The record gives the reactivity of an RNA of 170 nucleotides to DMS and 2A3. It was measured as part of the RMDB library 15KLIB. Values cover nucleotides 27 to 129. Conditions: 150 mM KOAc, 10 mM MgCl2 and 150 mM bicine (pH 8.5), 24 C.
RNA sequence: GGGAACGACUCGAGUAGAGUCGAAAACACCACAGAGGUUAAAGUGAGUGCUUUGAAAACAGCCGGCGUUGUGACAGGUAAUGUUGUAAAACAGUGUUGCACUGCUGCUGUUGAUUUAAGUAUGGAUUAACGGACUUCUUCGGAAGUCCGAAAAGAAACAACAACAACAAC
Reactivity to DMS in 0.01 (KOAc 150mM, MgCl2 10mM, bicine 150mM(pH8.5), 24C), signal-to-noise 4, nucleotides 027 to 129: c150a140c030c050a000c140a080g020a110g030g010u000u000a050a080a100g060u000g000a150g060u050g010c040u020u030u030g040a150a060a030a010c010a010g040c080c000g030g000c020g030u010u000g020u020g010a070c050a030g050g000u030a070a090u040g020u020u020g010u080a110a080a010a030c040a040g040u010g080u010u020g020c000a000c000u000g030c020u030g010c010u000g010u010u030g020a100u060u030u010a000a000g050u020a060u020g020g010a140u040u000a080a160
Reactivity to 2A3 in 0.01 (KOAc 150mM, MgCl2 10mM, bicine 150mM(pH8.5), 24C), signal-to-noise 4, nucleotides 027 to 129: c080a020c000c010a050c040a030g150a040g000g100u080u220a020a040a060g030u030g110a090g020u010g000c000u040u030u090g010a000a010a010a000c010a010g100c120c180g060g000c010g000u010u050g000u010g200a010c010a000g010g100u120a070a050u080g050u060u030g150u080a090a040a060a000c010a060g050u020g000u040u000g000c020a020c020u030g000c000u020g000c010u000g000u020u030g000a010u110u070u010a000a000g060u010a010u070g080g010a080u080u060a020a010